[RMDB]
RNA sequence: GGGAACGACUCGAGUAGAGUCGAAAACAUCGGAUCUCACGUGGCUUCAACGUCAACUUUGAUAGAUGGUCUGCAUCUUUUAAUACUAGACCAAGACCUUGGCCGGGGCUGUGGCCGGUGUCUUCGGUCAGGCGUGUCACUUCGGUGACACGCCUGAAAAAGAAACAACAACAACAAC
Reactivity to 2A3 in 0.01 (KOAc 150mM, MgCl2 10mM, bicine 150mM(pH8.5), 24C), signal-to-noise 1, nucleotides 027 to 126: c000a070u030c030g000g010a040u010c100u000c000a000c030g030u050g180g000c040u100u120c040a030a080c050g040u020c000a120a090c060u140u150u180g090a030u000a140g090a060u030g000g060u000c070u100g000c020a070u050c000u000u120u120u240a300a250u120a190c180u100a040g000a000c000c000a070a000g000a020c000c010u070u240g000g000c000c000g060g000g050g110c040u080g060u160g070g000c000c000g040g020u040g000u000c000u030u130c080g010g030
The record gives the reactivity of an RNA of 177 nucleotides to 2A3. Reactivities are given for positions 27 through 126. For 2A3 the reverse transcriptase was SuperScript II with manganese. The reactions ran in a buffer of 150 mM KOAc, 10 mM MgCl2 and 150 mM bicine (pH 8.5), at 24 C. Reactivities are rounded to 0.1 and cut off at 0 and 3. It was measured as part of the RMDB library OK1LIB.